RNA sequence: GGGAACGACUCGAGUAGAGUCGAAAAGCCGAGGUGUGCGGUGUGCUGACCAGAUUUGCGGUGAAAAGAGGCGUCGAUGGCCAGAACGCACAGUGGGCUGAUCAGCCCACUCUCAAUCGCCGUGCUCACGUGGUCCAUGUUUCGACAUGGACCACGUAAAAGAAACAACAACAACAAC
Reactivity to DMS in 0.01 (KOAc 150mM, MgCl2 10mM, bicine 150mM(pH8.5), 24C), signal-to-noise 2, nucleotides 027 to 126: g010c030c040g020a150g010g040u000g040u010g020c120g000g060u000g030u010g010c040u040g020a110c040c030a110g010a100u040u000u000g050c060g000g030u000g010a020a080a130a120g000a090g040g000c020g010u000c080g020a100u010g010g000c050c070a110g000a100a040c090g040c040a110c130a020g050u020g000g010g010c000u000g030a160u030c200a080g030c000c000c020a000c010u020c020u010c010a080a220u000c060g000c010c000g030u000g010c130u000c070